[RMDB]
Structure probing data (DMS and 2A3) for a 177-nucleotide construct. The data come from the RNA Mapping Database (RMDB), library OK2TST. High 2A3 reactivity points to a flexible backbone, as in loops and unpaired stretches.
RNA sequence: GGGAACGACUCGAGUAGAGUCGAAAAAGGGAACUUCGCCAACCUGGUGAACCGGACCCUCUCGUUCAUCCAUCGCUUCUACCAGGGAAGGAUCCCCGAGGCCCCUACGGAUACGGCCUUCUGGGGAGUAACGUUUUCAAUUCGUUGAAAACGUUACAAAAGAAACAACAACAACAAC
Reactivity to DMS in 0.01 (KOAc 150mM, MgCl2 10mM, bicine 150mM(pH8.5), 24C), signal-to-noise 5, nucleotides 027 to 126: a050g010g010g010a120a120c090u000u010c080g020c060c040a110a230c080c090u010g020g010u000g010a020a050c070c050g010g000a150c040c020c030u000c070u010c070g010u000u010c070a090u000c020c050a070u010c050g000c120u000u000c020u010a080c040c040a080g010g000g010a080a060g000g010a150u000c000c000c000c000g000a030g000g000c000c000c090c060u020a230c170g000g010a140u010a100c290g000g000c010c010u000u000c060u010g030g000g020g010a050
Reactivity to 2A3 in 0.01 (KOAc 150mM, MgCl2 10mM, bicine 150mM(pH8.5), 24C), signal-to-noise 4, nucleotides 027 to 126: a010g050g000g020a030a030c020u060u040c030g020c020c020a090a120c090c120u060g000g000u020g010a030a020c090c040g060g030a060c000c030c000u010c020u030c030g060u070u050c030a080u030c050c000a040u070c030g030c130u040u000c010u060a070c010c020a030g030g030g010a020a040g040g040a070u050c010c000c000c000g000a000g010g010c000c010c000c030u060a050c130g080g000a070u070a150c060g010g000c010c000u070u040c110u190g020g000g000g000a010
The 2A3 profile rests on 6,757 reads. Values cover nucleotides 27 to 126. The reactions ran in a buffer of 150 mM KOAc, 10 mM MgCl2 and 150 mM bicine (pH 8.5), at 24 C.